[RMDB]
RNA sequence: GGGAACGACUCGAGUAGAGUCGAAAACAACCUGGACGCUGAGGACGUGAGCAAGAACACCAAGAUAGUCACCGCCGUCGUGAACGCCACGUACGCGCGGUACAUGGCCAAUAGGUUUACCCUUGAGCCGAACGACAGGUGGCUUCUCCUGUACGUGUAAGUAAAUCUCGUUCGCGAGAUUUACUUAAAAAGAAACAACAACAACAAC
Reactivity to DMS in 0.01 (KOAc 150mM, MgCl2 10mM, bicine 150mM(pH8.5), 24C), signal-to-noise 2, nucleotides 027 to 156: c050a060a160c040c010u010g010g000a080c050g030c030u000g020a110g010g000a160c040g010u010g010a100g040c060a140a100g030a110a100c020a130c020c010a070a140g050a070u020a060g000u000c050a080c020c020g040c040c030g030u000c020g020u000g020a070a140c170g000c070c020a040c050g010u010a030c050g030c100g000c060g000g020u000a030c040a000u000g000g030c010c040a050a130u000a080g000g030u000u000u000a050c070c040c020u000u000g020a110g020c060c010g000a030a040c000g000a050c020a070g020g000u000g000g020c050u000u000c090u000c050c010u010g020u000a030c040g030u020g000
Reactivity to 2A3 in 0.01 (KOAc 150mM, MgCl2 10mM, bicine 150mM(pH8.5), 24C), signal-to-noise 3, nucleotides 027 to 156: c030a000a040c000c000u010g070g020a000c020g010c040u050g020a030g010g000a020c040g080u120g020a050g040c070a060a050g050a180a040c030a030c050c020a060a000g040a190u130a040g060u040c050a000c010c000g020c000c010g020u010c000g000u020g020a110a030c130g130c120c010a010c010g120u180a010c010g100c000g000c000g000g000u010a010c010a010u070g010g000c040c020a090a110u140a110g010g020u040u080u180a120c040c010c000u010u050g030a020g000c010c010g020a020a010c020g020a020c020a010g000g030u000g020g000c000u070u010c010u020c030c020u020g010u070a080c070g030u050g030